[RMDB]
RNA sequence: GGGAACGACUCGAGUAGAGUCGAAAAUCGCGAUGGAAACCCUGGCCGGGGUUGAAGCGUUAAAACUAAGCGGCCUCGCCUUUAUUUACCGUGUUUGUCCGGGACUUAAAGGUUAAUUAAAUGACAAUACUAAGCAUGUAGUACCGACGGUCGAGGCGAGUUUAAGAUUCUUCGGAAUCUUAAACUCAAAAGAAACAACAACAACAAC
Reactivity to DMS in 0.01 (KOAc 150mM, MgCl2 10mM, bicine 150mM(pH8.5), 24C), signal-to-noise 2, nucleotides 027 to 156: u010c000g010c030g010a230u000g040g000a140a080a040c030c020c000u000g040g040c100c050g050g010g020g010u000u000g000a140a200g020c020g020u000u000a030a120a130a110c050u000a110a120g010c000g040g020c000c010u000c090g010c020c000u010u000u010a040u010u000u000a040c000c000g030u010g000u000u000u000g010u000c070c000g020g020g010a050c060u000u000a000a020a050g020g020u000u000a020a100u000u000a090a050a080u000g000a060c050a020a090u000a090c050u000a120a090g020c040a070u000g000u000a120g030u000a070c040c020g000a070c070g010g020u000c020g000a060g020g050c100
Reactivity to 2A3 in 0.01 (KOAc 150mM, MgCl2 10mM, bicine 150mM(pH8.5), 24C), signal-to-noise 2, nucleotides 027 to 156: u070c030g010c010g040a080u130g050g050a110a060a050c000c000c010u020g000g020c030c030g000g050g000g000u030u030g020a070a010g020c000g010u030u100a050a190a030a040c080u070a050a030g050c020g010g000c010c010u000c010g010c000c000u000u000u010a010u000u050u050a010c010c000g030u010g030u020u060u060g010u000c010c010g010g010g010a010c000u010u000a000a000a020g000g020u000u030a020a000u050u040a000a000a030u060g010a000c010a000a040u050a160c040u120a080a040g030c080a090u120g030u110a060g020u060a070c030c030g050a050c060g040g040u060c060g000a020g000g060c080